[RMDB]
RNA sequence: GGGAACGACUCGAGUAGAGUCGAAAAGUGGUUUAGGAUUAAUGCCACCAUUUGUAAUAGGAUUCAUUGCCAUCCGUUUAUCAUUCAUUGGAGCAAUUGCCCGAAUUUCAGAGUUUAAUCUACCUGACCGUCGUAAUACGUUCGCGUAUUACGACGGAAAAGAAACAACAACAACAAC
Reactivity to 2A3 in 0.01 (KOAc 150mM, MgCl2 10mM, bicine 150mM(pH8.5), 24C), signal-to-noise 3, nucleotides 027 to 126: g000u020g070g040u080u190u160a150g060g030a100u130u140a120a050u300g010c010c000a020c010c000a010u090u070u090g060u080a070a100u040a160g070g020a030u040u120c010a020u040u190g000c060c020a070u000c010c020g000u060u120u090a150u060c070a070u180u110c030a030u050u180g040g000a050g010c030a050a050u030u040g040c040c000c020g050a090a080u060u030u060c040a010g040a060g100u070u000u050a040a030u000c000u030a040c010c000u010g040a070
Reactivity to DMS in 0.01 (KOAc 150mM, MgCl2 10mM, bicine 150mM(pH8.5), 24C), signal-to-noise 2, nucleotides 027 to 126: g020u000g000g000u010u010u010a090g030g000a070u010u000a150a080u020g020c000c010a090c020c050a050u000u010u010g010u000a080a070u010a130g030g000a080u000u010c130a100u000u000g000c070c080a080u000c010c010g010u000u010u000a100u020c080a050u000u000c140a100u010u000g010g020a160g000c020a060a050u000u000g020c090c010c030g000a060a090u000u010u000c050a030g000a110g010u000u010u010a070a060u000c080u000a110c040c010u000g000a130
Annotation:
The record gives the reactivity of an RNA of 177 nucleotides to 2A3 and DMS. In probing experiments dimethyl sulfate is read out at A N1 and C N3, which are open when not base-paired. For 2A3, 1,396 sequencing reads were counted. For 2A3 the reverse transcriptase was SuperScript II with manganese.